RNA sequence: GGGAACGACUCGAGUAGAGUCGAAAAUCCGGCGAGCCCUCGAGGGGCACGUUGGAAUGGCCAUCCAAUCCUAGGAGUGUGGCUGUGGAUUCGAAUCACGUUUUGGCUCUCCUUUUCAAUGGGACGAAUACCAGUAUGCGUUCGCGCAUACUGGUAUAAAAGAAACAACAACAACAAC
Reactivity to DMS in 0.01 (KOAc 150mM, MgCl2 10mM, bicine 150mM(pH8.5), 24C), signal-to-noise 4, nucleotides 027 to 126: u010c000c000g000g010c020g020a070g010c000c000c000u000c230g010a190g040g010g030g010c010a010c010g020u000u010g000g010a030a040u000g010g000c040c040a070u010c010c030a080a130u010c060c030u010a080g030g010a120g020u010g050u000g000g020c050u000g000u000g000g000a110u010u000c140g010a110a120u000c060a030c070g000u000u000u010u010g000g010c050u020c010u010c010c020u000u000u020u010c150a080a080u000g010g010g000a110c150g010a120
Reactivity to 2A3 in 0.01 (KOAc 150mM, MgCl2 10mM, bicine 150mM(pH8.5), 24C), signal-to-noise 2, nucleotides 027 to 126: u000c000c000g000g020c010g010a000g000c000c040c010u080c120g220a220g000g020g010g030c010a000c020g010u010u010g000g030a050a100u060g050g000c020c000a040u010c030c010a040a050u000c020c020u090a060g040g010a050g040u200g030u100g050g050c070u040g060u060g030g030a100u000u140c050g060a100a210u050c050a030c080g030u060u000u090u080g030g010c010u030c000u030c060c000u100u130u060u120c090a130a090u170g040g030g070a030c050g040a050